[RMDB]
RNA sequence: GGGAACGACUCGAGUAGAGUCGAAAACUAGUCUGUCAGUGAUAGGAGCGGUUAUACGCAUGGGAUAAAACAAUAUUGGGCCACUGUACAUGGAGAUGAAAUGUGUUUUGUCUCUCGUACAUGGUCUCGGCUUAAAUCGUUUCGACGAUUUAAGCCGAAAAGAAACAACAACAACAAC
Reactivity to 2A3 in 0.01 (KOAc 150mM, MgCl2 10mM, bicine 150mM(pH8.5), 24C), signal-to-noise 3, nucleotides 027 to 126: c020u040a070g070u040c050u120g080u050c060a090g020u070g180a070u090a040g030g090a040g000c000g060g020u200u070a120u040a100c120g000c090a130u130g080g000g010a060u190a090a180a030a050c140a190a110u170a230u300u300g030g000g000c000c010a000c190u020g000u000a000c010a030u250g010g010a000g010a000u020g020a000a040a000u200g130u020g100u040u000u030u000g010u000c000u000c000u020c020g000u000a030c030a020u000g000g000u010c000u000